[RMDB]
RNA sequence: GGGAACGACUCGAGUAGAGUCGAAAAGAUAUGGACUGGUGGAGAGCGACGAUCGUUGCUCGGAAACGAGCAACGGGAGCUCCCACCCAGUCCUAAGUCAAAAUCCAUCGAGUUCGCUCGAUGGAAAUCAAAUUAGAUUGUUCGCAAUCUAAUUUGAAAAAGAAACAACAACAACAAC
Reactivity to DMS in 0.01 (KOAc 150mM, MgCl2 10mM, bicine 150mM(pH8.5), 24C), signal-to-noise 5, nucleotides 027 to 126: g000a010u000a050u000g000g000a020c000u000g010g040u000g010g000a190g010a010g020c000g010a070c300g010a010u010c010g010u000u000g000c000u010c000g010g000a010a010a040c000g020a020g000c000a010a010c000g000g000g000a010g020c000u000c010c010c000a010c130c050c110a000g000u000c000c000u000a000a060g000u010c000a140a090a130a200u000c000c000a000u000c000g010a020g010u000u020c300g020c010u000c000g010a010u010g000g000a000a040a070
Reactivity to 2A3 in 0.01 (KOAc 150mM, MgCl2 10mM, bicine 150mM(pH8.5), 24C), signal-to-noise 5, nucleotides 027 to 126: g000a000u020a010u040g000g000a010c010u020g050g060u010g020g200a300g030a010g300c010g300a300c010g000a060u000c010g000u010u000g000c000u020c010g000g000a000a010a000c000g000a000g000c000a010a000c000g000g000g000a000g000c000u000c000c010c000a010c000c010c000a010g000u000c000c010u000a000a000g010u000c010a020a020a030a300u000c010c000a000u000c000g010a010g030u110u130c270g090c160u000c010g010a010u000g000g000a050a010a000
An RNA of 177 nucleotides, treated with DMS and 2A3 and read out base by base.
For 2A3, 17,302 sequencing reads were counted.
The data come from the RNA Mapping Database (RMDB), library TTRDES.
The DMS profile rests on 10,582 reads.